[RMDB]
RNA sequence: GGGAACGACUCGAGUAGAGUCGAAAAGAUAUGGAACCCAAGGGAGCGACUAUACAGUUCCAAGAUAUAUCGGAAACGAUAUAUCUUGGAACUGUAUAGAUCGCGAGGAUCUUGUGGUUCCUAAGUCCAUUUGUUAUCCCUUCGGGGAUAACAAAUGAAAAGAAACAACAACAACAAC
Reactivity to DMS in 0.01 (KOAc 150mM, MgCl2 10mM, bicine 150mM(pH8.5), 24C), signal-to-noise 1, nucleotides 027 to 126: g000a150u010a300u010g000g000a000a000c000c000c000a020a010g000g000g000a030g020c010g000a030c000u000a020u000a000c010a010g000u000u000c000c000a030a000g000a040u000a010u000a000u000c010g000g000a150a110a300c000g020a030u000a000u000a000u000c000u000u010g010g000a000a000c000u010g000u000a000u000a010g000a100u000c000g020c000g010a030g020g000a020u000c000u000u000g010u010g020g010u000u000c000c000u000a020a110g000u010c050